[RMDB]
RNA sequence: GGGAACGACUCGAGUAGAGUCGAAAAGCAGUUUCACUCACGAUAGACUCUUGAGGAAGAGUGUCAGUAUUGCUUCCUCAAGCAAUACAUUACGGUUUGCCAAAACUGUAAUUGACAGCAGAUUGGCAUCUGCUCUAUCUCAUGAAACUGGUGAGUCUCGGUUUUACCGAUUCGUCGGUAAAACCGAAAAAGAAACAACAACAACAAC
Reactivity to 2A3 in 0.01 (KOAc 150mM, MgCl2 10mM, bicine 150mM(pH8.5), 24C), signal-to-noise 2, nucleotides 027 to 156: g100c000a000g000u030u020u000c040a040c100u060c040a040c170g040a030u000a000g000a000c000u040c030u030u080g240a120g150g090a060a000g000a020g000u010g020u050c020a010g000u010a030u000u030g010c000u060u040c020c050u050c060a000a000g000c010a010a010u010a000c010a020u000u020a010c010g020g020u020u010u060g280c100c050a060a050a010a010c000u000g010u010a000a020u050u130g000a020c010a000g030c000a000g020a070u080u180g170g040c140a050u010c010u010g000c000u000c000u020a020u000c040u000c020a050u030g010a000a000a020c000u010g070g060u100g060a090g080u040c040
Chemical mapping of a 207-nucleotide RNA with 2A3. Conditions: 150 mM KOAc, 10 mM MgCl2 and 150 mM bicine (pH 8.5), 24 C. For 2A3 the reverse transcriptase was SuperScript II with manganese.